An RNA of 170 nucleotides, treated with DMS and 2A3 and read out base by base. In probing experiments dimethyl sulfate is read out at A N1 and C N3, which are open when not base-paired.
RNA sequence: GGGAACGACUCGAGUAGAGUCGAAAAUUUUAUCAGCAUGUAAUCAAUGGUUGCAAAGAUACGGCAUGCUUGCUCUGCUAUAAGAGGAACCGACUUACUAGAGUUGAAGCUUCUACCGUUGUCUGUGAAAGGAAUAUGUUCGCAUAUUCCAAAAGAAACAACAACAACAAC
Reactivity to DMS in 0.01 (KOAc 150mM, MgCl2 10mM, bicine 150mM(pH8.5), 24C), signal-to-noise 2, nucleotides 027 to 129: u030u030u000u040a080u040c080a070g000c060a000u020g040u030a080a050u030c070a080a230u050g020g030u080u040g040c020a050a050a140g020a060u030a080c150g070g000c060a050u040g010c080u000u000g050c040u030c060u030g030c030u000a100u030a010a020g020a000g000g020a100a140c180c000g030a080c030u010u040a020c000u090a070g010a050g020u000u010g040a090a090g050c090u020u040c090u060a080c100c050g000u000u000g000u040c130u060g030u040g020a080a130a120
Reactivity to 2A3 in 0.01 (KOAc 150mM, MgCl2 10mM, bicine 150mM(pH8.5), 24C), signal-to-noise 5, nucleotides 027 to 129: u000u000u010u040a110u090c040a000g020c010a010u070g030u130a100a050u050c060a060a100u140g140g020u160u130g060c090a130a120a020g050a080u120a100c030g010g000c010a000u020g000c000u000u040g030c040u050c010u060g040c040u110a060u040a160a020g010a010g050g030a030a030c050c000g000a000c000u000u010a000c000u010a000g000a000g030u000u030g070a060a010g040c010u070u000c060u060a180c000c060g000u000u010g000u000c120u040g040u030g070a100a040a010
Source: RMDB library 15KLIB, as collected in RNAgym. The reactions ran in a buffer of 150 mM KOAc, 10 mM MgCl2 and 150 mM bicine (pH 8.5), at 24 C.